Overview:
This 207-nucleotide RNA was probed chemically with 2A3 and DMS. The 2A3 profile rests on 985 reads. Source: RMDB library OK3TST, as collected in RNAgym.
[RMDB]
RNA sequence: GGGAACGACUCGAGUAGAGUCGAAAAUACUGUACCAGUAAAUAUGAAAAAUAUUAAUGUCCUCACACACAUGGAGGUGGCUUGUGAGUGGUGUGAGCAUUUCAUGGUCAGAGUUUGGCAGUUGGGCGAGAGACAGGAUGGAUUUUAACUCGAACAACUAAAUGACCGAUUUCGAUCGGUCAUUUAGAAAAGAAACAACAACAACAAC
Reactivity to 2A3 in 0.01 (KOAc 150mM, MgCl2 10mM, bicine 150mM(pH8.5), 24C), signal-to-noise 2, nucleotides 027 to 156: u110a040c040u030g040u130a040c030c020a030g030u150a030a110a020u150a060u090g040a020a140a000a070a030u110a040u100u100a110a080u070g020u070c040c010u020c000a010c000a000c000a000c000a060u040g080g010a010g000g070u030g040g030c050u120u060g050u040g070a090g030u020g050g000u010g000u000g000a020g020c020a020u030u040u150c070a020u060g010g020u000c000a000g010a050g080u040u160u060g060g020c050a040g010u060u090g030g020g000c030g020a010g020a000g000a030c030a000g070g020a020u050g020g000a010u080u060u060u140a040a020c040u080c100g020a040a000c010a020a040
Reactivity to DMS in 0.01 (KOAc 150mM, MgCl2 10mM, bicine 150mM(pH8.5), 24C), signal-to-noise 1, nucleotides 027 to 156: u000a050c060u000g010u000a250c010c040a140g040u000a070a050a110u000a030u000g000a030a070a120a150a110u010a070u010u010a060a070u000g010u000c010c040u010c010a050c050a070c060a050c100a210u000g000g010a040g030g030u000g000g050c020u000u000g000u000g000a140g000u020g000g030u000g030u000g000a060g040c030a060u000u000u000c090a080u020g000g010u010c040a150g010a140g010u000u000u000g000g040c010a100g010u000u000g010g000g020c030g030a080g010a150g020a090c040a030g000g000a080u000g000g020a150u000u000u000u010a050a080c090u000c020g030a030a070c050a070a130